[RMDB]
RNA sequence: GGGAACGACUCGAGUAGAGUCGAAAAUGUCACAAACCCAGUCAAUACAACAGACAGCAGGACAUUGUGGGUAGGUGGCACACUGUUGAGCAACACCACAAGAGAGAAUCCGGCAAGCGUAGUGACCGGGGGUAUACUACUUCGGUAGUAUACCCCCAAAAGAAACAACAACAACAAC
Reactivity to DMS in 0.01 (KOAc 150mM, MgCl2 10mM, bicine 150mM(pH8.5), 24C), signal-to-noise 2, nucleotides 027 to 126: u030g000u000c030a000c100a040a070a090c020c000c030a090g000u000c100a070a060u090a070c210a180a070c200a050g000a040c050a040g000c080a030g000g020a040c080a160u010u010g010u000g000g000g000u030a000g010g020u000g010g000c000a040c180a100c270u010g060u000u040g000a000g000c110a070a000c060a120c040c000a010c110a020a000g010a140g000a060g000a050a010u020c020c010g010g010c060a080a070g000c040g000u000a110g000u000g000a110c020c080
Reactivity to 2A3 in 0.01 (KOAc 150mM, MgCl2 10mM, bicine 150mM(pH8.5), 24C), signal-to-noise 4, nucleotides 027 to 126: u060g030u010c010a020c020a090a120a210c040c000c000a000g050u060c030a050a090u100a300c100a120a010c010a160g140a020c010a010g080c030a020g020g000a020c020a060u040u070g040u030g000g040g020u030a100g030g070u070g090g070c050a020c000a010c070u170g150u230u090g040a060g020c020a030a030c030a020c010c010a000c020a060a000g060a000g030a010g030a110a060u040c020c010g030g000c030a060a020g010c020g130u100a020g040u040g040a010c010c020